[RMDB]
This 207-nucleotide RNA was probed chemically with 2A3.
RNA sequence: GGGAACGACUCGAGUAGAGUCGAAAAGAUAUGGAUCGUCUAGUACGACGCGGUGCCUUGGAUUUAAGUCCUCGGAAACGAGGACUUUGUCAGGCACCGAACUACGUCGGACCGACGAUCCUAAGUCAAAACGCCCACAACGUUCGCGUUGUGGGCGCCUAGCUAGCUCCUUCGGGAGCUAGCUAGGAAAAGAAACAACAACAACAAC
Reactivity to 2A3 in 0.01 (KOAc 150mM, MgCl2 10mM, bicine 150mM(pH8.5), 24C), signal-to-noise 2, nucleotides 027 to 156: g040a010u020a010u100g000g010a000u000c000g030u010c020u020a000g000u000a000c010g000a000c020g000c000g100g010u010g020c000c020u120u300g140g010a070u260u240u150a000a000g010u000c000c000u000c010g000g010a060a070a010c000g000a000g000g000a000c020u010u000u020g000u010c030a000g000g000c000a000c010c010g060a000a000c010u100a080c040g000u000c020g010g010a020c020c000g000a000c000g000a000u020c000c000u000a000a000g000u000c000a020a000a060a100c020g020c030c000c030a000c000a000a000c000g070u110u130c300g000c020g190u000u000g000u000g020g010g010c000g010
The reactions ran in a buffer of 150 mM KOAc, 10 mM MgCl2 and 150 mM bicine (pH 8.5), at 24 C. For 2A3, 1,556 sequencing reads were counted. It was measured as part of the RMDB library RNAMAK.